[RMDB]
RNA sequence: GGGAACGACUCGAGUAGAGUCGAAAAGACGCCUUUAGAAGAAGAGGCUAUGGGGUAUUCCGGUGUGGGAUACUUAGUAAUAUGCAACGCUAAUUGCAUAAGAUUGUAGGACGGAAUUUACAGUCUUUAGAGAUAAGCACGUUCGCGUGCUUAUCAAGCCGAACUGAUGAUUCGUCAUCAGUUCGGCAAAAGAAACAACAACAACAAC
Reactivity to 2A3 in 0.01 (KOAc 150mM, MgCl2 10mM, bicine 150mM(pH8.5), 24C), signal-to-noise 1, nucleotides 027 to 156: g130a010c040g020c010c010u040u050u050a250g090a170a030g040a020a070g000a070g050g000c000u010a010u050g150g040g000g000u050a050u010u040c070c020g130g000u260g010u070g020g000g010a000u000a040c000u050u040a010g030u050a040a040u080a030u080g020c030a010a010c010g030c110u110a050a090u030u000g000c030a020u050a070a000g020a000u000u090g000u050a020g040g100a050c090g020g060a020a100u080u100u050a050c050a050g000u000c000u060u090u140a050g000a000g000a050u000a000a010g000c000a000c020g010u040u040c150g100c010g110u020g000c000u000u000a000u000c000a000a000